Notes:
Structure probing data (2A3 and DMS) for a 207-nucleotide construct. For 2A3 the reverse transcriptase was SuperScript II with manganese. Values cover nucleotides 27 to 156. For DMS, 3,874 sequencing reads were counted. Reactivities are rounded to 0.1 and cut off at 0 and 3. For DMS the reverse transcriptase was MarathonRT.

RNA sequence: GGGAACGACUCGAGUAGAGUCGAAAACAUCUUUCCUCCCUACACAGUGCCUCCAGCUUGGGAGGGGCAGGGCUAGGCUGAGCCAGCACUCCCUGUGGUGUCUGCCUGCCACGUGCAGCUCUGGAGUAAAACCUGGAGAAGUUCGCUUCUCCAGGAACAAAAAACGAUUGUUCGCAAUCGUUUUUUGAAAAGAAACAACAACAACAAC
Reactivity to 2A3 in 0.01 (KOAc 150mM, MgCl2 10mM, bicine 150mM(pH8.5), 24C), signal-to-noise 3, nucleotides 027 to 156: c030a120u100c130u110u110u040c010c020u020c000c000c000u110a040c160a020c020a130g120u060g090c010c000u010c010c000a020g010c030u040u050g000g010g000a010g000g000g000g000c000a010g000g030g030c050u270a030g000g010c020u020g030a030g130c050c010a050g070c030a040c050u070c010c040c000u030g050u040g020g020u030g150u000c020u030g010c020c010u020g010c030c000a140c120g140u150g020c000a040g010c030u000c010u070g000g030a000g030u070a000a070a010a030c000c000u000g000g000a010g010a000a000g010u030u170c210g000c140u000u000c000u020c010c000a000g000g010a000a000
Reactivity to DMS in 0.01 (KOAc 150mM, MgCl2 10mM, bicine 150mM(pH8.5), 24C), signal-to-noise 2, nucleotides 027 to 156: c050a120u000c100u000u010u000c030c020u010c000c000c010u000a170c090a200c190a100g000u000g020c050c010u010c000c010a170g000c120u000u010g030g020g010a070g030g030g020g000c030a040g000g000g000c020u010a070g030g030c030u010g000a300g000c010c040a130g000c040a060c050u000c000c030c010u010g020u010g010g030u000g020u000c030u000g000c020c030u010g020c030c020a060c090g020u000g030c040a070g020c040u000c030u010g020g010a100g020u010a090a060a130a150c010c020u000g000g010a020g020a020a020g020u000u000c300g020c030u000u010c000u010c000c000a000g000g000a010a060